[RMDB]
RNA sequence: GGGAACGACUCGAGUAGAGUCGAAAAAUCACUGUAACGGUCGACAGUGGAACUGUAUUUUCCGAGAUUUCUGACCUGGGUUCAAACCCUGCGGUCGGACGUGGCUUUAAGCCUCUUUCGGGAGGUUGCUACACGCUCAGUCUAACAAUCGAGUCGACUCUGAGGUUAGGUUCGCCUAACCUCAGAGAAAAGAAACAACAACAACAAC
Reactivity to 2A3 in 0.01 (KOAc 150mM, MgCl2 10mM, bicine 150mM(pH8.5), 24C), signal-to-noise 1, nucleotides 027 to 156: a000u040c000a010c000u030g020u030a160a090c060g060g030u030c020g080a000c040a040g000u010g060g010a120a010c070u060g000u160a200u020u090u050u040c020c040g040a040g000a150u050u140u020c030u020g000a010c000c000u020g040g000g010u090u300c050a140a030a180c020c000c010u010g060c100g000g000u000c000g010g000a000c050g000u020g000g000c010u090u180u210a060a000g000c000c000u000c000u020u020u050c040g060g020g000a010g010g000u090u000g030c020u030a020c040a000c020g010c010u070c060a020g000u050c050u070a060a080c050a070a140u070c020g040a000g000u030c000g040a090